Structure probing data (2A3) for a 207-nucleotide construct. 2A3 adducts were read by reverse transcription with SuperScript II with manganese.

RNA sequence: GGGAACGACUCGAGUAGAGUCGAAAAAGACGUGUACGCACGUCACACCGUGGCGGCGGUGUAAAACAAACAUUAAGCCGGCAGCGUCCCGGAACAAGGCAUUUUCCGAUUCUCCGGGGGUUGCAAAAAAACUGAACUUGGUUCGCCAAGUUCAGAACCGUCUAGAAUUGUUCGCAAUUCUAGACGGAAAAGAAACAACAACAACAAC
Reactivity to 2A3 in 0.01 (KOAc 150mM, MgCl2 10mM, bicine 150mM(pH8.5), 24C), signal-to-noise 2, nucleotides 027 to 156: a000g000a000c010g010u010g010u060a030c160g010c140a000c010g000u000c010a000c000a000c000c010g020u040g020g000c090g020g020c010g000g000u050g020u070a050a060a040a020c090a040a050a000c040a050u140u210a140a030g010c030c020g030g010c010a000g040c000g140u210c000c010c000g000g000a030a020c050a080a030g040g050c060a060u120u070u100u110c030c030g030a060u160u000c020u000c090c010g000g000g020g010g000u010u010g000c010a010a000a130a000a000a000a060c000u000g000a010a000c000u000u000g000g010u030u030c030g030c050c000a000a000g000u030u020c000a000g000a000a020